[RMDB]
RNA sequence: GGGAACGACUCGAGUAGAGUCGAAAAUUGGAAUUUUUAUCUCCUGUGCCAGAAGAGAUUGCUAUUAAGGUUGGAAAGCUUCUUGAUUUAAAACUUGGGCAAAAUCAGAGAAUUCAUGAAAGGAUUGUCAUAUUAGUCGAUUCGUCGACUAAUAUGAAAAAGAAACAACAACAACAAC
Reactivity to 2A3 in 0.01 (KOAc 150mM, MgCl2 10mM, bicine 150mM(pH8.5), 24C), signal-to-noise 2, nucleotides 027 to 126: u100u070g010g070a020a030u100u010u110u060u080a120u180c060u030c000c010u050g070u100g070c010c010a020g050a140a020g020a040g020a080u010u060g010c010u030a090u140u080a130a000g030g110u070u050g110g060a130a020a110g000c010u030u040c010u040u110g080a140u170u050u300a020a090a040a110c000u040u050g070g020g000c020a060a000a040a000u060c030a010g060a010g030a080a050u020u160c030a040u120g170a130a000a000g040g060a040u100u170g060
Reactivity to DMS in 0.01 (KOAc 150mM, MgCl2 10mM, bicine 150mM(pH8.5), 24C), signal-to-noise 4, nucleotides 027 to 126: u000u020g020g010a110a030u000u000u020u000u000a080u040c070u000c010c020u000g020u000g010c050c020a100g020a140a100g010a030g000a110u000u000g010c070u000a040u000u010a100a070g010g000u000u000g010g010a080a090a100g000c040u010u010c080u000u010g000a070u000u000u000a060a090a110a080c060u000u010g010g000g000c050a040a040a080a060u000c050a060g000a110g010a050a070u000u000c030a040u010g010a100a090a140g000g000a070u000u000g010